[RMDB]
RNA sequence: GGGAACGACUCGAGUAGAGUCGAAAAGAUAUGGACCAUCCAUCGGAUGAUGACCAUGUCUGGCUACUAUUAUCGGAAACGAUAAUAGUAGCCAGACAUGCAAGUCCAGAUGGAGUGGUCCUAAGUCGGAGAUAAUUUACUUCGGUAAAUUAUCUCCAAAAGAAACAACAACAACAAC
Reactivity to 2A3 in 0.01 (KOAc 150mM, MgCl2 10mM, bicine 150mM(pH8.5), 24C), signal-to-noise 1, nucleotides 027 to 126: g040a020u150a070u170g000g000a010c000c000a000u000c000c020a010u000c000g040g000a030u020g050a090u120g030a060c010c030a000u010g000u040c000u000g020g000c000u000a000c000u010a000u030u020a010u000c030g070g090a130a000a120c040g020a020u000a010a000u000a010g010u000a000g060c000c000a000g000a010c010a000u010g040c000a030a110g030u000c000c110a070g000a010u000g000g030a020g120u070g000g000u000c000c000u000a060a010g150u100c140
Reactivity to DMS in 0.01 (KOAc 150mM, MgCl2 10mM, bicine 150mM(pH8.5), 24C), signal-to-noise 2, nucleotides 027 to 126: g000a170u000a290u010g020g020a030c000c000a090u000c000c000a020u010c030g010g030a030u000g000a050u010g010a260c300c010a010u000g020u000c000u010g000g020c000u010a020c000u000a000u000u000a000u000c000g000g000a070a050a160c020g010a000u000a000a000u000a000g000u000a000g000c000c000a000g010a010c010a000u000g000c020a030a090g000u000c000c000a210g030a010u000g000g000a040g040u000g010g010u000c000c000u000a000a080g020u000c120
Chemical mapping of a 177-nucleotide RNA with 2A3 and DMS.
For 2A3, 4,118 sequencing reads were counted.